[RMDB]
An RNA of 207 nucleotides, treated with 2A3 and DMS and read out base by base.
The reactions ran in a buffer of 150 mM KOAc, 10 mM MgCl2 and 150 mM bicine (pH 8.5), at 24 C.
For DMS the reverse transcriptase was MarathonRT.
2A3 adducts were read by reverse transcription with SuperScript II with manganese.
RNA sequence: GGGAACGACUCGAGUAGAGUCGAAAAAGCAGCUCAUGAGAUUAUGGCCAAGUCAUUAACUGGUGCACGCCAAGAGAUUGCUGGUAUGUUGGAUUCUACCAAAGGAUUAAUCCGGAAUGGCCUCCGGGCCGGUGGACUAAGGCCCCGACUAGUUGAGACCAAACAUUAACUUCGGUUAAUGUUUGGUAAAAGAAACAACAACAACAAC
Reactivity to 2A3 in 0.01 (KOAc 150mM, MgCl2 10mM, bicine 150mM(pH8.5), 24C), signal-to-noise 1, nucleotides 027 to 156: a000g030c020a000g000c000u020c080a090u210g040a050g000a170u100u150a050u160g020g020c020c030a100a010g040u090c040a110u140u230a110a040c100u130g050g050u090g000c100a030c090g000c000c010a060a010g000a000g040a110u070u070g030c040u000g010g090u090a050u160g050u020u130g030g010a070u000u090c000u000a060c000c050a120a100a060g030g000a060u130u100a050a010u110c020c000g000g050a070a050u050g020g010c000c010u010c020c020g000g020g000c010c000g000g000u050g010g000a020c000u070a070a070g070g000c030c040c000c010g100a080c060u050a030g080u010u030g000a010g060
Reactivity to DMS in 0.01 (KOAc 150mM, MgCl2 10mM, bicine 150mM(pH8.5), 24C), signal-to-noise 2, nucleotides 027 to 156: a100g010c010a050g030c050u000c020a040u030g010a200g010a150u000u020a060u000g010g000c030c030a090a160g000u000c070a160u000u010a070a080c080u000g000g010u010g010c040a080c080g000c020c040a070a110g010a100g010a060u000u000g010c010u000g010g000u000a060u000g010u020u000g010g000a210u010u000c020u000a060c060c020a050a050a130g020g010a230u000u000a050a100u010c020c000g010g010a070a080u010g040g020c020c020u010c110c080g050g050g040c010c020g010g000u000g000g030a170c070u010a070a080g000g000c020c000c020c010g000a080c060u000a070g000u000u000g010a170g020